This 207-nucleotide RNA was probed chemically with DMS and 2A3. 2A3 adducts were read by reverse transcription with SuperScript II with manganese. For DMS the reverse transcriptase was MarathonRT. It was measured as part of the RMDB library M2RFPK.
RNA sequence: GGGAACGACUCGAGUAGAGUCGAAAAGGUAUGAUUAGGGUGAGACCUAGGAUCCGUAGGGGUAUUCUCAAAGGAAGCUUUUGCAGUGACGCCCAUGUAAGUGGGAUAUAACAACAGAACUCGUAUGUGUGGCACAGAGAGUUCGCUCUCUGUGCAACCAUCUAUUCAUGUUCGCAUGAAUAGAUGGAAAAGAAACAACAACAACAAC
Reactivity to DMS in 0.01 (KOAc 150mM, MgCl2 10mM, bicine 150mM(pH8.5), 24C), signal-to-noise 2, nucleotides 027 to 156: g020g030u010a040u010g010a140u000u000a030g020g020g030u000g010a180g000a120c030c010u000a080g020g000a050u000c020c050g020u000a120g030g000g020g060u000a030u000u000c020u000c030a090a130a080g010g000a080a070g020c080u000u000u020u010g040c010a120g020u000g000a160c120g000c000c010c010a030u000g000u000a060a170g000u000g000g020g020a050u000a050u000a090a070c080a080a090c010a050g000a060a060c060u000c060g000u000a090u000g030u000g020u000g020g010c000a000c000a010g010a040g000a040g030u000u000c300g040c010u000c000u010c000u000g000u000g000c000a010a060
Reactivity to 2A3 in 0.01 (KOAc 150mM, MgCl2 10mM, bicine 150mM(pH8.5), 24C), signal-to-noise 4, nucleotides 027 to 156: g030g010u100a060u100g070a110u090u130a020g000g020g020u020g070a090g030a030c010c020u020a030g010g070a040u050c070c040g050u080a040g000g050g000g000u050a090u140u050c070u010c000a070a080a000g070g010a030a030g020c040u010u080u050u120g030c070a030g000u010g050a020c080g020c000c010c010a000u040g070u120a080a090g020u050g000g020g000a010u030a000u020a140a050c080a020a000c000a020g070a100a020c050u050c140g050u080a100u160g100u020g000u040g070g000c000a000c000a000g000a000g000a000g000u030u060c130g070c010u010c000u000c000u000g000u010g000c010a000a000